[RMDB]
RNA sequence: GGGAACGACUCGAGUAGAGUCGAAAAUACUCUUUAAUCCUCACUACAACCACCUAAAAGGGCAAUAUUAUUUCCUCAUCUUGCACUUCUGAGGGAGAGAACAAUUUGUGCAGUCACACAGCUGUUAGGUGUUAUCAAUGUUCGCAUUGAUAACACCAAAAGAAACAACAACAACAAC
Reactivity to 2A3 in 0.01 (KOAc 150mM, MgCl2 10mM, bicine 150mM(pH8.5), 24C), signal-to-noise 3, nucleotides 027 to 126: u040a000c020u010c000u110u100u050a080a060u060c010c020u070c030a060c010u110a030c020a090a060c020c030a020c000c040u140a050a080a020a040g060g000g000c030a040a020u060a050u200u110a100u050u090u030c010c020u040c020a060u010c020u010u100g000c050a040c070u050u060c010u090g030a030g040g000g000a030g010a000g000a040a020c040a070a100u130u080u040g070u100g030c010a010g000u080c000a030c010a010c000a090g090c000u020g060u180u100a100
Reactivity to DMS in 0.01 (KOAc 150mM, MgCl2 10mM, bicine 150mM(pH8.5), 24C), signal-to-noise 3, nucleotides 027 to 126: u000a170c060u000c020u000u010u010a110a080u000c020c030u000c070a060c100u010a050c080a060a080c060c060a060c070c070u020a030a030a080a100g000g020g030c020a050a060u010a070u000u000a150u010u000u000c020c020u000c140a040u000c050u030u000g000c050a040c070u000u000c090u000g000a110g010g010g020a100g000a110g000a090a070c070a050a090u000u000u000g000u010g010c030a020g000u000c070a080c090a040c120a040g010c080u000g010u010u000a100